[RMDB]
The data come from the RNA Mapping Database (RMDB), library OK3TST. This 207-nucleotide RNA was probed chemically with DMS. For DMS, 2,785 sequencing reads were counted. DMS adducts were read by reverse transcription with MarathonRT. Conditions: 150 mM KOAc, 10 mM MgCl2 and 150 mM bicine (pH 8.5), 24 C.
RNA sequence: GGGAACGACUCGAGUAGAGUCGAAAAGCGUUCGCCCGGCGAGGCAGGGCGAGUGGACGUGGGGUCGACGGAGCGAGCCGGGCAGGCUGGGAACUGAGAUUUGGAUUCUCUCCCCCAGAGAAAGGCGAAGGGCAAAAUGGGGUGUGGGAGGCAGGGAAAUACUAUACGUGUUCGCACGUAUAGUAUUAAAAGAAACAACAACAACAAC
Reactivity to DMS in 0.01 (KOAc 150mM, MgCl2 10mM, bicine 150mM(pH8.5), 24C), signal-to-noise 1, nucleotides 027 to 156: g000c050g000u000u000c030g010c000c000c040g070g000c030g020a110g040g010c040a160g000g030g000c000g010a030g030u010g000g000a060c020g000u000g010g030g030g010u010c000g060a050c040g000g000a190g000c050g030a170g000c010c000g000g000g050c030a030g000g010c050u000g030g000g000a060a040c070u000g020a040g030a120u030u000u000g030g000a270u000u000c040u000c010u000c000c010c010c000c030a080g000a110g000a070a100a060g030g010c090g040a100a090g030g040g000c080a030a020a000a070u010g000g000g000g000u010g010u000g010g000g010a030g000g060c050a110g040g010g000a080